[RMDB]
Conditions: 150 mM KOAc, 10 mM MgCl2 and 150 mM bicine (pH 8.5), 24 C. Chemical mapping of a 177-nucleotide RNA with DMS and 2A3. The 2A3 profile rests on 7,714 reads.
RNA sequence: GGGAACGACUCGAGUAGAGUCGAAAAGUCACUCAAUUCGUUGAGUGACAUACUGGGCCCGGAGUCGCGCAUGAAAGGGUCAAGACGCGCUCGAUAAAAUAUCUAGUUGCCAGUUCGCUGGCAACAACCCAUUUAAAGGUUUCGACCUUUAAAUGGGAAAAGAAACAACAACAACAAC
Reactivity to DMS in 0.01 (KOAc 150mM, MgCl2 10mM, bicine 150mM(pH8.5), 24C), signal-to-noise 3, nucleotides 027 to 126: g000u010c010a020c000u010c000a010a020u000u020c160g020u000u010g020a020g010u000g000a000c000a020u000a020c070u000g020g000g030c000c010c010g010g010a080g010u000c030g030c060g040c080a190u020g010a070a190a090g000g010g020u010c060a090a110g010a170c030g000c040g010c010u000c020g000a090u020a070a060a060a090u010a070u010c070u000a130g010u000u000g000c000c000a010g010u010u010c240g020c010u000g010g000c000a000a000c010a130a130
Reactivity to 2A3 in 0.01 (KOAc 150mM, MgCl2 10mM, bicine 150mM(pH8.5), 24C), signal-to-noise 6, nucleotides 027 to 126: g000u000c000a000c000u000c000a000a030u080u090c180g040u090u020g000a000g000u010g000a000c000a000u020a000c010u040g010g080g010c020c010c030g050g000a010g020u200c040g010c000g010c080a040u120g160a140a110a130g160g010g060u060c050a010a020g070a060c010g000c010g000c010u010c010g060a080u130a180a110a040a020u210a060u080c060u090a050g010u000u000g000c000c000a010g000u050u030c240g040c080u000g000g030c000a000a000c000a000a000